[RMDB]
RNA sequence: GGGAACGACUCGAGUAGAGUCGAAAAUAAAUCCAUCAGAGCCCUCAUCAGUUCGAUGGAGAGUCAGGCUCAGAAAUAAAUGAGCCGACAAGAUGAGGAGGUGUCGAGGAAAACUCGACGCCAAAAACAUACCUACCCAUUUCGAUGGGUAGGUAUGAAAAGAAACAACAACAACAAC
Reactivity to 2A3 in 0.01 (KOAc 150mM, MgCl2 10mM, bicine 150mM(pH8.5), 24C), signal-to-noise 8, nucleotides 027 to 126: u170a010a060a020u010c020c000a010u020c030a050g090a070g160c030c010c000u020c010a040u010c010a020g110u140u080c030g030a040u040g050g010a040g010a010g030u050c110a110g000g000c000u000c010a010g080a010a270a020u300a020a060a070u020g000a000g000c000c000g000a000c020a020a030g010a010u040g010a010g030g050a040g000g000u000g000u000c000g000a010g010g080a050a090a120a170c000u000c000g000a000c000g000c000c000a090a000a000a000a000
Reactivity to DMS in 0.01 (KOAc 150mM, MgCl2 10mM, bicine 150mM(pH8.5), 24C), signal-to-noise 5, nucleotides 027 to 126: u040a080a080a090u000c000c000a000u010c040a140g020a080g010c090c000c030u000c050a030u000c030a200g030u010u010c090g000a030u000g000g000a060g000a100g010u000c040a080g000g010c000u000c000a010g000a110a140a160u040a080a140a100u000g000a000g000c000c010g010a030c050a150a090g000a030u020g000a020g000g010a240g000g020u000g000u020c000g000a010g000g000a090a080a100a140c000u000c000g010a010c000g020c000c000a020a040a030a060a080